[RMDB]
RNA sequence: GGGAACGACUCGAGUAGAGUCGAAAACGAGAGAAACAGCAAUUCGAGUUUUCGAAGGACUGGAAUUUCACAAUUCCGCGACUUGCCGGUGACAUUCAACUCCGACUGGUUAGUUUCCGCGCUGUUAAUAUCCAGUACUUUUCGAAGUACUGGAUAUAAAAGAAACAACAACAACAAC
Reactivity to DMS in 0.01 (KOAc 150mM, MgCl2 10mM, bicine 150mM(pH8.5), 24C), signal-to-noise 9, nucleotides 027 to 126: c040g010a220g000a100g010a130a060a050c010a010g010c030a210a240u010u000c010g010a220g000u000u000u000u000c020g010a060a090g010g010a120c190u010g010g010a020a020u000u000u010c210a110c220a060a050u000u000c010c010g010c090g000a060c030u000u000g010c020c010g010g000u000g000a090c140a090u010u010c210a090a120c050u000c020c020g000a020c020u000g000g000u000u010a080g010u000u000u000c010c010g010c160g020c020u000g000u000u000a110
Reactivity to 2A3 in 0.01 (KOAc 150mM, MgCl2 10mM, bicine 150mM(pH8.5), 24C), signal-to-noise 8, nucleotides 027 to 126: c020g010a010g000a000g020a080a110a000c000a010g020c020a030a090u070u020c010g010a020g060u060u050u060u040c020g020a040a020g050g040a030c070u110g020g020a020a020u020u140u160c120a060c040a070a040u040u000c010c010g020c020g030a040c020u030u060g010c020c000g020g010u030g030a050c040a090u130u110c070a150a080c030u030c040c010g060a030c020u020g020g020u020u070a060g000u010u040u000c020c010g030c020g000c020u010g010u030u030a050